[RMDB]
RNA sequence: GGGAACGACUCGAGUAGAGUCGAAAACGUAUGCAAGGAAUAAGGGUAUACCGUAUCUACCUGGUAUAAAUGGUAUUGCUUGGAAGUUAUUGAGAUUGAAGUGGCUUGGGUAUACAGACCAGAUAAACUAGAUGAACUUGUUCGCAAGUUCAUCUAGAAAAGAAACAACAACAACAAC
Reactivity to DMS in 0.01 (KOAc 150mM, MgCl2 10mM, bicine 150mM(pH8.5), 24C), signal-to-noise 7, nucleotides 027 to 126: c100g010u020a080u000g010c040a040a050g000g000a070a040u010a090a070g000g000g010u010a040u010a040c040c010g020u020a080u020c090u020a060c100c080u020g000g010u000a020u010a050a060a050u010g000g000u000a030u010u010g000c030u000u000g000g000a060a070g000u010u010a060u010u010g000a060g010a090u030u020g010a070a060g010u010g000g010c040u010u000g010g000g000u010a030u010a030c100a090g010a130c050c030a070g000a080u020a060a090a150
Reactivity to 2A3 in 0.01 (KOAc 150mM, MgCl2 10mM, bicine 150mM(pH8.5), 24C), signal-to-noise 7, nucleotides 027 to 126: c030g060u090a040u150g050c020a020a090g070g140a120a040u150a100a080g120g000g000u050a040u020a060c030c020g030u050a110u060c060u050a090c030c020u030g000g030u090a080u030a110a120a080u180g040g000u040a020u060u130g030c030u050u050g050g030a060a090g020u070u050a110u110u160g070a110g060a080u070u110g050a150a060g030u020g050g010c030u040u030g050g000g000u030a030u010a070c030a020g060a030c020c010a020g020a140u180a020a080a020
Structure probing data (DMS and 2A3) for a 177-nucleotide construct. The reactions ran in a buffer of 150 mM KOAc, 10 mM MgCl2 and 150 mM bicine (pH 8.5), at 24 C. DMS adducts were read by reverse transcription with MarathonRT. For 2A3 the reverse transcriptase was SuperScript II with manganese.